[RMDB]
RNA sequence: GGGAACGACUCGAGUAGAGUCGAAAAGAUAUGGAUGUAGUCUUCCUUGGAUUUAAAAUACAUCGGAAACGAUGUAUCACUUUGUCAGGAAGCUACAUCCUAAGUCAAACAGACCUUCGGGUCUGAACACAAAAGAUAAGUUCGCUUAUCUUUUGUGAAAAGAAACAACAACAACAAC
Reactivity to DMS in 0.01 (KOAc 150mM, MgCl2 10mM, bicine 150mM(pH8.5), 24C), signal-to-noise 9, nucleotides 027 to 126: g000a030u000a300u010g000g010a010u000g010u000a000g000u010c010u000u000c000c000u000u010g030g010a030u000u000u000a030a050a080a020u000a000c000a000u000c000g000g000a120a100a200c010g010a010u000g010u000a000u000c060a090c160u000u000u000g000u000c020a030g000g000a020a010g000c010u000a010c000a000u000c000c000u000a010a060g000u000c030a120a120a270c010a010g000a010c000c000u000u010c210g030g020g010u000c000u000g000a090a220
Reactivity to 2A3 in 0.01 (KOAc 150mM, MgCl2 10mM, bicine 150mM(pH8.5), 24C), signal-to-noise 7, nucleotides 027 to 126: g030a020u070a040u180g000g000a010u010g000u020a020g060u090c020u010u020c010c010u050u160g190g020a050u120u170u300a030a050a010a010u000a000c000a000u000c010g020g010a060a080a010c010g000a010u000g000u010a000u000c000a020c050u050u060u030g040u060c030a010g000g000a010a000g000c000u000a000c000a000u000c000c000u000a000a000g000u000c000a040a040a110c010a000g000a000c010c000u040u120c300g100g000g000u000c000u000g010a080a020
An RNA of 177 nucleotides, treated with DMS and 2A3 and read out base by base. It was measured as part of the RMDB library TTRDEL. For DMS the reverse transcriptase was MarathonRT. For 2A3, 29,924 sequencing reads were counted.